[RMDB]
RNA sequence: GGGAACGACUCGAGUAGAGUCGAAAAACGAAGGGAACACCAUGACACUGAUCGAGGACGUGCUGAGCGAGCAGAUAGCUGCCCUGCGCGCGUCGGCCGGCCUGUUCGUGCGCCAGCGCGCCGACGCCCGUCUUAGCAUCUUCGGAUGCUAAGACGGAAAAGAAACAACAACAACAAC
Reactivity to 2A3 in 0.01 (KOAc 150mM, MgCl2 10mM, bicine 150mM(pH8.5), 24C), signal-to-noise 1, nucleotides 027 to 126: a010c050g010a100a040g000g020g020a030a010c030a030c030c040a070u150g020a000c040a000c050u060g020a140u100c070g060a050g020g010a020c050g050u190g000c020u000g020a020g050c010g000a000g000c020a010g030a100u140a000g080c020u050g070c000c000c000u000g050c000g000c020g000c010g180u060c000g010g010c020c000g010g080c000c000u000g020u110u080c050g020u040g040c050g040c000c050a040g030c030g030c020g000c070c000g030a010c000g040c000
Reactivity to DMS in 0.01 (KOAc 150mM, MgCl2 10mM, bicine 150mM(pH8.5), 24C), signal-to-noise 1, nucleotides 027 to 126: a090c120g020a060a060g030g000g010a100a060c040a050c060c020a060u000g000a100c040a050c070u010g000a060u000c070g000a070g010g040a040c050g000u020g050c010u010g030a160g030c050g000a070g010c020a040g000a140u010a140g010c010u000g010c030c060c000u000g020c060g020c100g050c000g010u000c010g060g010c010c030g000g000c030c030u000g020u010u000c020g000u010g020c070g000c080c040a090g020c050g000c050g020c020c030g010a080c100g000c140
This 177-nucleotide RNA was probed chemically with 2A3 and DMS. DMS adducts were read by reverse transcription with MarathonRT. It was measured as part of the RMDB library OK2TST. Reactivities are given for positions 27 through 126. The RNA was probed in 150 mM KOAc, 10 mM MgCl2 and 150 mM bicine (pH 8.5) at 24 C. For DMS, 1,465 sequencing reads were counted.